[RMDB]
RNA sequence: GGGAACGACUCGAGUAGAGUCGAAAAUAAAGGUUGACUUGACUCCACACAGGCCAACACUUUUGUGUAAGAAUAGCAAUGCCAUUUCUGGUUUCCCUGAAAGGGAGGAUGAGCUUAGGCAAACAGGGCCCCCUUCUAGUUUCGACUAGAAGGGGGCAAAAGAAACAACAACAACAAC
Reactivity to DMS in 0.01 (KOAc 150mM, MgCl2 10mM, bicine 150mM(pH8.5), 24C), signal-to-noise 1, nucleotides 027 to 126: u020a010a120a000g000g010u000u000g000a070c070u040u020g000a050c030u000c040c120a090c050a120c000a000g000g000c040c040a010a010c000a190c060u000u000u000u000g000u010g020u030a050a110g000a060a090u010a060g000c010a160a120u010g010c010c010a110u010u020u030c000u000g040g000u010u000u000c000c000c010u020g030a030a120a110g000g010g000a010g000g010a050u010g020a130g030c060u020u010a080g000g040c000a060a100a090c070a170g000g010
Reactivity to 2A3 in 0.01 (KOAc 150mM, MgCl2 10mM, bicine 150mM(pH8.5), 24C), signal-to-noise 1, nucleotides 027 to 126: u180a000a050a000g100g050u000u000g000a000c000u020u060g000a000c000u000c000c170a050c000a000c000a060g010g010c000c000a020a020c150a250c010u000u000u000u190g110u000g070u150a070a120g050a260a190u030a110g000c020a000a250u130g000c020c000a100u040u080u090c030u020g090g050u080u000u000c000c010c020u020g280a290a210a260g020g000g050a030g170g000a150u100g000a000g000c000u100u210a130g170g000c000a000a000a200c000a090g100g000